[RMDB]
RNA sequence: GGGAACGACUCGAGUAGAGUCGAAAAGCCGUUGGCAGGUCGUUGUGCUUGAAAAAUUGUUAGAAGUCCAAGAGCACCCGCGAUGCGGAUAAACCAGCAGUGCUGGCCCCGAUGGCAACAGCGUGGACAGCUAGUCAGCGUUCGCGCUGACUAGCUGAAAAGAAACAACAACAACAAC
Reactivity to DMS in 0.01 (KOAc 150mM, MgCl2 10mM, bicine 150mM(pH8.5), 24C), signal-to-noise 1, nucleotides 027 to 126: g030c020c010g000u000u000g000g020c050a090g030g000u000c050g000u010u010g000u000g000c030u030u000g000a040a140a100a090a160u000u010g020u010u010a140g000a130a090g000u000c060c080a110a260g000a110g000c030a030c020c050c100g010c040g000a080u000g010c040g000g020a100u000a070a120a080c040c010a010g020c010a140g020u000g060c030u000g000g010c080c000c010c030g000a120u000g000g010c030a020a090c070a110g000c060g030u000g020g000a160
Overview:
Source: RMDB library OK2TRN, as collected in RNAgym. This 177-nucleotide RNA was probed chemically with DMS. The RNA was probed in 150 mM KOAc, 10 mM MgCl2 and 150 mM bicine (pH 8.5) at 24 C. DMS adducts were read by reverse transcription with MarathonRT.